About this RNA: Structure probing data (DMS and 2A3) for a 207-nucleotide construct. The RNA was probed in 150 mM KOAc, 10 mM MgCl2 and 150 mM bicine (pH 8.5) at 24 C. The 2A3 profile rests on 8,721 reads.
[RMDB]
RNA sequence: GGGAACGACUCGAGUAGAGUCGAAAAGGUCGUUUCGACGACCGACUUCCGUAGGCCUUGAUCUCUUGGACCUCACACUCCCCACCCGUGUUCGAAAGAGCACGGAGGUGUGAGCUAGAGAAUAAGGCCUAAACGGCAAUACUUACUUCGGUAAGAAACUCUAGUUAACUUUCGAGUUAACUAGAGUAAAAGAAACAACAACAACAAC
Reactivity to DMS in 0.01 (KOAc 150mM, MgCl2 10mM, bicine 150mM(pH8.5), 24C), signal-to-noise 3, nucleotides 027 to 156: g020g030u000c000g030u000u010u000c200g020a180c000g000a000c000c000g010a040c040u000u000c000c020g020u000a030g010g000c000c000u000u000g000a130u020c010u010c000u000u010g020g020a090c300c010u010c000a010c010a040c010u000c020c040c030c040a300c110c010c000g050u000g000u000u000c010g020a200a150a260g000a070g000c010a010c000g000g000a020g010g010u000g000u000g020a010g000c030u000a010g010a020g010a060a160u000a040a020g010g000c000c010u000a010a010a040c050g020g010c070a110a080u000a120c010u000u000a010c010u000u000c280g020g000u000a010a030g000a220a140
Reactivity to 2A3 in 0.01 (KOAc 150mM, MgCl2 10mM, bicine 150mM(pH8.5), 24C), signal-to-noise 7, nucleotides 027 to 156: g020g000u000c010g010u020u070u210c280g150a050c010g000a000c000c000g010a020c020u110u040c010c000g030u020a010g000g010c010c000u050u030g100a100u080c000u020c020u080u130g110g080a200c020c000u000c000a000c000a000c010u110c040c020c010c010a040c020c000c000g000u000g000u010u000c010g020a140a080a060g000a030g000c010a010c010g000g000a000g000g000u000g000u000g000a010g010c000u010a010g010a000g020a030a010u110a060a000g000g000c000c000u000a010a000a000c010g040g000c070a060a120u080a260c030u040u030a000c010u040u060c170g080g000u060a010a010g010a220a050